[RMDB]
RNA sequence: GGGAACGACUCGAGUAGAGUCGAAAACUGCCGACUCAGUGUGUGGACGCCUGGUUUUGGGUGUAGUCUUUCGUUGAGAUCCGAAGAAGGGUGUACUUCUGACUGAAAGAUCAGAACUGAGUCGAGAGCGUCUGCCUUGCUUCGGCAGGGUGGGCGCAAAAGAAACAACAACAACAAC
Reactivity to 2A3 in 0.01 (KOAc 150mM, MgCl2 10mM, bicine 150mM(pH8.5), 24C), signal-to-noise 9, nucleotides 027 to 126: c020u050g030c010c000g000a000c000u000c000a010g010u020g020u040g050u130g220g040a020c000g010c000c010u070g100g050u060u050u070u130g060g000g000u070g070u090a080g040u020c000u020u110u090c100g120u060u160g060a030g010a070u030c010c010g020a030a020g040a040a050g060g010g010u060g020u050a120c020u030u020c010u010g030a030c010u100g110a110a080a040g060a120u030c010a000g020a030a010c000u000g000a000g000u000c000g000a020g010a000
Reactivity to DMS in 0.01 (KOAc 150mM, MgCl2 10mM, bicine 150mM(pH8.5), 24C), signal-to-noise 9, nucleotides 027 to 126: c020u010g010c100c010g010a010c000u000c000a010g010u010g010u030g020u020g010g010a040c010g000c010c000u010g010g020u040u010u020u020g000g000g010u010g020u020a120g010u010c020u000u020u020c100g010u020u030g010a100g000a060u010c030c030g000a030a010g000a080a070g000g000g020u010g010u010a040c020u000u000c010u000g000a050c050u010g010a050a050a060g000a100u000c030a030g000a080a040c000u000g000a010g010u000c000g000a060g010a130
This 177-nucleotide RNA was probed chemically with 2A3 and DMS. For 2A3, 151,559 sequencing reads were counted. For DMS the reverse transcriptase was MarathonRT. Values cover nucleotides 27 to 126. It was measured as part of the RMDB library OK1LIB. 2A3 adducts were read by reverse transcription with SuperScript II with manganese.